RNA sequence: GGGAACGACUCGAGUAGAGUCGAAAAGGCGCCAACCCUACGCGGCGCGGCCGUCGGUGGGCGUGGUCACCUUCAACCGCAAGCAAGCCGACCUCAUCGAGGAGCGCCUGGAACUGCGCGCCGAGCACGCAUCGCGAUUAUUCGUAAUCGCGAUGCGAAAAGAAACAACAACAACAAC
Reactivity to 2A3 in 0.01 (KOAc 150mM, MgCl2 10mM, bicine 150mM(pH8.5), 24C), signal-to-noise 1, nucleotides 027 to 126: g000g020c000g000c020c030a050a050c050c000c020u080a020c080g070c080g050g020c000g030c000g020g300c070c010g240u050c010g010g000u000g020g000g000c120g060u120g020g000u040c060a040c020c000u050u030c080a240a250c160c110g040c100a000a000g010c010a000a160g050c010c020g080a070c020c030u000c030a040u020c010g020a020g000g000a020g000c000g000c000c010u030g000g050a040a030c070u030g010c010g020c030g040c090c010g000a060g060c040a030
Reactivity to DMS in 0.01 (KOAc 150mM, MgCl2 10mM, bicine 150mM(pH8.5), 24C), signal-to-noise 2, nucleotides 027 to 126: g020g010c010g020c000c020a060a120c070c060c010u000a100c130g000c180g000g050c000g010c000g020g060c000c000g030u000c000g040g030u000g020g010g000c140g020u000g020g010u000c050a160c300c020u030u000c070a200a130c260c120g020c110a100a060g010c080a110a180g000c010c020g000a090c300c030u000c000a020u000c010g020a100g010g020a300g020c070g000c000c020u000g000g010a080a050c070u000g000c040g040c040g000c000c000g010a100g020c230a270